An RNA of 207 nucleotides, treated with DMS and 2A3 and read out base by base. For 2A3, 5,105 sequencing reads were counted. Conditions: 150 mM KOAc, 10 mM MgCl2 and 150 mM bicine (pH 8.5), 24 C. Source: RMDB library RNAMAK, as collected in RNAgym.

RNA sequence: GGGAACGACUCGAGUAGAGUCGAAAAGAUAUGGAUCGUCUCGUCCUUGGAUUUAUAUAAUCCCUCAGAUCGGAAACGAUCUGAGAACUUAUAUUGUCAGGACGUGAGACGAUCCUAAGUCAAAAUACCAAUUUCAACUUCGGUUGAAAUUGGUAAACGAAGUUUAGAAGUUCGCUUCUAAACUUCGAAAAGAAACAACAACAACAAC
Reactivity to DMS in 0.01 (KOAc 150mM, MgCl2 10mM, bicine 150mM(pH8.5), 24C), signal-to-noise 1, nucleotides 027 to 156: g010a080u010a160u000g000g010a010u000c000g050u010c000u010c010g030u000c010c010u000u010g050g020a020u000u000u000a030u000a000u000a030a020u000c020c010c030u000c010a020g010a010u010c010g020g000a250a120a220c000g010a010u000c010u020g000a000g000a010a050c100u010u000a050u000a030u010u010g000u010c020a000g010g000a070c020g030u010g090a020g020a040c000g000a000u000c000c010u000a020a140g030u010c040a080a080a110a230u000a030c000c010a010a020u000u000u000c000a000a000c010u000u010c300g080g050u000u010g000a000a010a010u000u000g020g000u000a000a010a090
Reactivity to 2A3 in 0.01 (KOAc 150mM, MgCl2 10mM, bicine 150mM(pH8.5), 24C), signal-to-noise 3, nucleotides 027 to 156: g020a010u050a040u130g000g000a000u000c000g000u000c010u010c010g000u020c010c000u050u170g160g010a040u180u300u010a020u000a000u010a010a030u170c030c010c000u000c010a000g000a000u000c010g010g020a050a080a050c000g000a000u000c000u000g010a000g000a000a000c000u000u010a000u000a010u020u020g020u020c020a020g000g010a010c060g060u190g050a010g000a010c000g000a000u000c000c000u000a000a000g000u000c000a060a050a020a100u050a010c000c000a000a000u000u000u010c000a000a010c000u050u060c170g120g000u000u000g000a000a000a000u000u010g000g000u010a000a000a000